Source information:
This 177-nucleotide RNA was probed chemically with 2A3. For 2A3 the reverse transcriptase was SuperScript II with manganese.

[RMDB]
RNA sequence: GGGAACGACUCGAGUAGAGUCGAAAAGCACAACCCAAGCAAAAAUUGGACACUUCAAUCCAAACGGAGUACCCGGCUUUGCAGACGAUUGUGUACCAUUCAAAAAAGAUCAAUGCAAUAUUUGGCCCCCUGCCGUCCUAUUCGUAGGACGGCAGGGAAAAGAAACAACAACAACAAC
Reactivity to 2A3 in 0.01 (KOAc 150mM, MgCl2 10mM, bicine 150mM(pH8.5), 24C), signal-to-noise 2, nucleotides 027 to 126: g040c060a010c030a020a000c030c000c050a050a050g020c000a000a020a060a020a020u140u180g000g020a020c040a000c110u180u070c010a040a110u060c060c090a010a080a030c080g020g000a020g060u000a100c030c000c000g040g000c020u060u030u040g000c060a030g000a070c050g070a140u050u020g000u020g020u050a070c020c050a050u180u180c150a000a040a030a030a100a050g090a070u100c040a040a020u130g070c040a090a000u010a090u050u000u040g030g010c020c000
Source: RMDB library OK1LIB, as collected in RNAgym. The reactions ran in a buffer of 150 mM KOAc, 10 mM MgCl2 and 150 mM bicine (pH 8.5), at 24 C. For 2A3, 593 sequencing reads were counted.